[RMDB]
RNA sequence: GGGAACGACUCGAGUAGAGUCGAAAAGGGGGUAAGAUGGGUUUGAUAAGCGAGUCGAGGGAAGCAUGGUGCCUCGAUAAUAAAGUAUGCAUUAAAGAUAAACGCAGAAGAUAAUUUUGCAUUAGCAGCUUAAUUUAGCGCUGCUCAUCCUUCCUCACAUCCAUAUCACGUUCGCGUGAUAUGGAUGAAAAGAAACAACAACAACAAC
Reactivity to 2A3 in 0.01 (KOAc 150mM, MgCl2 10mM, bicine 150mM(pH8.5), 24C), signal-to-noise 4, nucleotides 027 to 156: g040g000g010g010g010u040a000a020g010a040u010g000g010g050u040u110u130g130a140u130a030a030g030c040g030a040g030u010c000g020a000g000g000g010a030a060g080c080a060u080g030g010u080g090c000c000u010c010g000a040u030a050a020u030a030a020a020g050u080a160u090g000c010a020u080u100a120a100a020g110a100u160a060a130a020c090g000c030a000g000a030a010g020a050u110a160a160u130u030u020u020g000c010a010u040u080a010g010c010a000g000c000u030u080a050a060u190u130u110a040g020c020g000c030u010g000c000u000c000a010u000c000c010u020u050c010c010u030c000a020
Reactivity to DMS in 0.01 (KOAc 150mM, MgCl2 10mM, bicine 150mM(pH8.5), 24C), signal-to-noise 2, nucleotides 027 to 156: g030g020g040g070g010u000a000a040g000a060u000g030g020g010u000u000u000g010a120u000a090a110g020c040g000a200g030u000c040g000a040g020g030g020a090a080g030c060a040u000g040g030u000g030c010c010u000c020g040a020u010a030a000u000a060a060a090g020u000a070u000g020c010a160u010u000a060a110a130g000a170u000a030a060a100c100g000c050a070g000a050a080g020a210u010a130a100u000u000u020u000g050c010a110u000u000a120g000c020a080g000c010u000u000a050a130u000u010u000a100g030c060g010c010u010g020c000u000c020a050u000c040c040u000u000c010c040u000c050a160
Background: Structure probing data (2A3 and DMS) for a 207-nucleotide construct. For 2A3 the reverse transcriptase was SuperScript II with manganese. For DMS the reverse transcriptase was MarathonRT. Conditions: 150 mM KOAc, 10 mM MgCl2 and 150 mM bicine (pH 8.5), 24 C.